[RMDB]
RNA sequence: GGGAACGACUCGAGUAGAGUCGAAAAGUCACUUGUUAACUUCACCGUUGAUCCUCAAAAAGCUUAUCUCGAUUUCGUCAAUGCGGGAGGUGCCCCAUUGACAAAUUGUGUUAAGAUGCUUACUCCUAUAGAAUUGGCUUCGGCCAAUUCAAAAGAAACAACAACAACAAC
Reactivity to 2A3 in 0.01 (KOAc 150mM, MgCl2 10mM, bicine 150mM(pH8.5), 24C), signal-to-noise 6, nucleotides 027 to 129: g000u050c030a030c120u080u110g060u120u100a100a050c010u060u030c050a050c070c010g000u010u060g020a010u010c000c010u010c000a010a050a000a010a040g020c000u050u040a040u050c080u030c030g010a000u000u000u010c100g000u000c020a010a010u020g030c200g020g030g050a140g200g150u300g080c030c000c000c000a000u000u000g000a000c000a010a010a010u000u010g020u000g000u010u010a010a000g010a030u060g040c030u060u060a100c000u040c020c000u060a070u060a220